Chemical mapping of a 177-nucleotide RNA with 2A3. 2A3 adducts were read by reverse transcription with SuperScript II with manganese. Reactivities are given for positions 27 through 126.
RNA sequence: GGGAACGACUCGAGUAGAGUCGAAAAUAAAAUACGGUGUAAGAACAGCCCAACUUACACCGUGCGGCACAGCGGAAACGCUGUUGUCGUAAAAUGGGCUAAUCGUAAAUAAACGAAAUAAAAAAAAACCAAUGUAACGGUUCGCCGUUACAUUGGUAAAAGAAACAACAACAACAAC
Reactivity to 2A3 in 0.01 (KOAc 150mM, MgCl2 10mM, bicine 150mM(pH8.5), 24C), signal-to-noise 1, nucleotides 027 to 126: u110a000a040a010a040u230a020c010g000g000u000g000u000a010a000g020a220a010c020a070g010c040c000c010a010a020c000u000u000a000c000a000c000c010g020u020g000c000g020g030c000a000c000a000g020c000g030g010a010a000a080c020g020c000u020g030u030u100g010u000c000g000u020a000a000a000a080u070g020g000g000c060u050a050a130u070c040g000u030a040a120a300u180a160a300a000c030g070a060a070a030u190a060a040a020a000a000a000a000a000